[RMDB]
RNA sequence: GGGAACGACUCGAGUAGAGUCGAAAAGCUGAUCUCGACUGGCGGGCUGCCCAAAGGGGAUGCGCUGGCCACCGCGCGGGUGGCGGGCAUUAUGGCGGCCAAGCGCACCAGCGACCUGAUCCCGCUGUCAUCCUGUCCCAUUCGUGGGACAGGAUGAAAAAGAAACAACAACAACAAC
Reactivity to DMS in 0.01 (KOAc 150mM, MgCl2 10mM, bicine 150mM(pH8.5), 24C), signal-to-noise 2, nucleotides 027 to 126: g030c060u010g000a030u010c080u010c030g000a120c070u000g000g030c030g000g020g000c030u000g010c060c010c170a050a130a140g000g010g010g010a100u000g000c010g000c020u000g040g030c000c000a030c010c020g030c170g030c200g000g000g020u000g000g020c000g000g000g020c030a050u000u010a080u000g010g020c050g030g000c010c040a020a080g000c070g030c070a090c090c000a020g010c020g010a050c100c050u000g010a100u000c020c030c020g000c080u000g000
Reactivity to 2A3 in 0.01 (KOAc 150mM, MgCl2 10mM, bicine 150mM(pH8.5), 24C), signal-to-noise 2, nucleotides 027 to 126: g000c010u040g030a110u100c020u050c070g240a270c070u020g030g020c060g000g030g000c020u030g020c000c050c010a100a130a030g110g030g000g000a060u040g020c190g020c040u050g250g040c040c010a020c010c010g060c060g030c120g200g020g000u020g030g000c000g000g010g000c010a010u060u080a140u300g000g020c000g000g030c020c020a040a020g110c050g000c020a020c000c010a000g020c010g030a040c010c000u080g010a270u050c000c000c000g040c040u070g080
The data come from the RNA Mapping Database (RMDB), library OK2TST.
An RNA of 177 nucleotides, treated with DMS and 2A3 and read out base by base.
The DMS profile rests on 1,750 reads.
High 2A3 reactivity points to a flexible backbone, as in loops and unpaired stretches.
Conditions: 150 mM KOAc, 10 mM MgCl2 and 150 mM bicine (pH 8.5), 24 C.